[RMDB]
RNA sequence: GGGAACGACUCGAGUAGAGUCGAAAAUCAUUGUCGGUGCUGACAAGCUCGUUAUCUCUGAACUUCAUAUUUCACUCUCGUUGAUGAUACGCAGCCCGGUACUCGUGAUGUGCCAUGUGCGGCCAUAGGGAAUAGGUUAGUUCGCUAACCUAUUCCCAAAAGAAACAACAACAACAAC
Reactivity to 2A3 in 0.01 (KOAc 150mM, MgCl2 10mM, bicine 150mM(pH8.5), 24C), signal-to-noise 5, nucleotides 027 to 126: u100c010a030u010u080g100u060c020g070g050u120g030c060u050g030a070c030a050a010g000c000u010c010g080u090u080a160u030c090u000c030u090g070a080a080c050u090u090c070a060u070a130u200u110u100c040a040c050u070c010u030c030g070u060u080g050a100u040g000a000u040a110c010g000c060a010g040c010c010c000g000g000u020a060c010u020c050g080u090g040a060u060g070u080g030c010c010a100u160g040u090g100c060g010g000c000c020a040u110a100
Reactivity to DMS in 0.01 (KOAc 150mM, MgCl2 10mM, bicine 150mM(pH8.5), 24C), signal-to-noise 2, nucleotides 027 to 126: u000c040a050u010u000g030u030c030g020g000u000g000c040u000g000a080c110a120a110g020c010u000c070g000u040u010a050u020c090u020c060u020g000a040a030c120u020u070c090a080u000a040u010u040u000c040a040c070u000c010u000c030g030u000u010g000a110u040g000a010u020a040c080g020c030a070g010c030c040c060g030g000u000a040c080u000c070g000u010g000a060u020g040u020g000c000c060a080u010g010u010g010c040g000g010c050c080a040u010a130